[RMDB]
RNA sequence: GGGAACGACUCGAGUAGAGUCGAAAAGAAUCCCCAUGACGCUGGAAGAGACUUCCGGGUAACCAAGUCAAGGAGAAGGAACGGUAGAAAAGAGCGAGCCUCUCGAUACGAAAGGGCCGCGAGCCUAGCAGACCAUGGUUCGCCAUGGUCAAAAGAAACAACAACAACAAC
Reactivity to 2A3 in 0.01 (KOAc 150mM, MgCl2 10mM, bicine 150mM(pH8.5), 24C), signal-to-noise 9, nucleotides 027 to 129: g040a010a080u040c010c000c000c020a090u110g030a010c040g020c100u040g020g020a040a010g050a040g020a100c020u080u000c040c010g000g010g010u060a030a040c030c010a080a020g080u090c010a040a030g050g020a040g020a020a040g020g000a040a020c060g020g010u100a060g100a060a120a040a000g050a020g020c040g020a020g010c020c000u030c010u010c040g060a070u080a190c030g050a100a020a030g000g000g000c000c000g040c020g020a010g010c010c010u010a030g030c050a040
Reactivity to DMS in 0.01 (KOAc 150mM, MgCl2 10mM, bicine 150mM(pH8.5), 24C), signal-to-noise 8, nucleotides 027 to 129: g030a190a120u000c000c000c010c160a080u030g000a050c110g000c010u020g000g000a080a050g000a150g000a100c060u010u040c070c010g000g050g000u040a110a120c100c100a070a110g020u000c010a080a000g000g000a090g020a060a060g000g000a020a010c130g000g000u040a050g020a050a030a030a030g000a080g000c080g000a070g010c000c000u000c030u010c030g020a070u000a110c110g000a060a090a030g000g010g000c000c050g030c090g030a050g000c020c010u000a090g020c090a080